[RMDB]
RNA sequence: GGGAACGACUCGAGUAGAGUCGAAAACUAACCAGGGUGUGCUGACAACCGUGGUUCAGCGUGCGAUGAACACGGCCGAUUACCAUUACGUGGGCUAGUUGUGUGCCGUGCUCGCUGGAUCGGAAAAGGUUGUCGCGUGUUUCGGCGCGCGACGACCAAAAGAAACAACAACAACAAC
Reactivity to 2A3 in 0.01 (KOAc 150mM, MgCl2 10mM, bicine 150mM(pH8.5), 24C), signal-to-noise 9, nucleotides 027 to 126: c030u040a020a030c010c010a030g030g040g010u070g010u050g050c070u090g050a040c030a070a030c050c010g080u100g020g000u000u010c000a010g000c020g030u040g020c050g170a250u180g100a110a010c010a000c010g000g010c000c000g010a020u030u090a040c010c010a030u140u170a100c230g080u220g020g020g050c090u040a030g020u020u050g100u030g090u190g080c010c000g000u020g020c010u000c000g000c000u010g010g000a010u020c000g080g010a060a100a020a020
Reactivity to DMS in 0.01 (KOAc 150mM, MgCl2 10mM, bicine 150mM(pH8.5), 24C), signal-to-noise 7, nucleotides 027 to 126: c110u010a070a130c030c030a070g010g020g030u010g010u020g010c060u020g010a060c070a110a070c010c000g010u020g010g020u010u000c010a010g010c010g010u010g000c140g000a110u030g010a150a110c130a020c000g000g000c000c020g000a040u000u010a060c010c020a080u010u050a120c290g020u020g010g000g010c270u010a020g020u000u000g020u020g040u020g000c000c010g020u000g000c020u000c000g000c010u010g000g000a020u000c010g010g010a060a050a090a100
Chemical mapping of a 177-nucleotide RNA with 2A3 and DMS. The reactions ran in a buffer of 150 mM KOAc, 10 mM MgCl2 and 150 mM bicine (pH 8.5), at 24 C. The 2A3 profile rests on 34,326 reads.